[RMDB]
RNA sequence: GGGAACGACUCGAGUAGAGUCGAAAAGAUAUGGAGACGCUACCCACCUCCUGGGACGUGAACUACGACCAACUGAUCGGAAACGAUCACGAACGUCGCACGUCCCAGGAGAGGCGUCUCCUAAGUCCAUUAGGUAUUCGUUCGCGAAUACCUAAUGAAAAGAAACAACAACAACAAC
Reactivity to 2A3 in 0.01 (KOAc 150mM, MgCl2 10mM, bicine 150mM(pH8.5), 24C), signal-to-noise 3, nucleotides 027 to 126: g120a090u290a180u300g020g000a000g010a010c010g070c010u170a300c020c030c030a020c010c000u000c000c010u000g010g010g000a000c010g010u000g030a180a130c120u230a070c300g010a030c020c000a020a040c020u000g010a010u000c000g010g030a110a000a100c010g000a000u000c020a000c030g070a120a010c020g020u010c010g000c010a000c000g000u010c000c010c000a000g000g000a000g000a000g000g010c000g000u000c010u010c000c000u000a000a000g020u030c040
Reactivity to DMS in 0.01 (KOAc 150mM, MgCl2 10mM, bicine 150mM(pH8.5), 24C), signal-to-noise 5, nucleotides 027 to 126: g010a150u030a150u000g020g010a030g000a020c010g020c010u000a170c010c010c030a300c100c000u000c000c000u010g000g000g000a000c000g000u010g000a110a060c150u000a300c010g020a010c000c030a040a190c300u000g000a010u000c000g010g000a100a080a300c000g000a010u000c000a000c050g000a140a230c300g000u010c020g000c000a000c000g020u000c000c000c000a010g000g000a010g000a000g000g010c000g000u000c000u010c000c000u000a010a090g000u010c100
Background
The data come from the RNA Mapping Database (RMDB), library TTRINS. An RNA of 177 nucleotides, treated with 2A3 and DMS and read out base by base. Conditions: 150 mM KOAc, 10 mM MgCl2 and 150 mM bicine (pH 8.5), 24 C. The 2A3 profile rests on 8,940 reads. For DMS, 4,641 sequencing reads were counted. Reactivities are given for positions 27 through 126.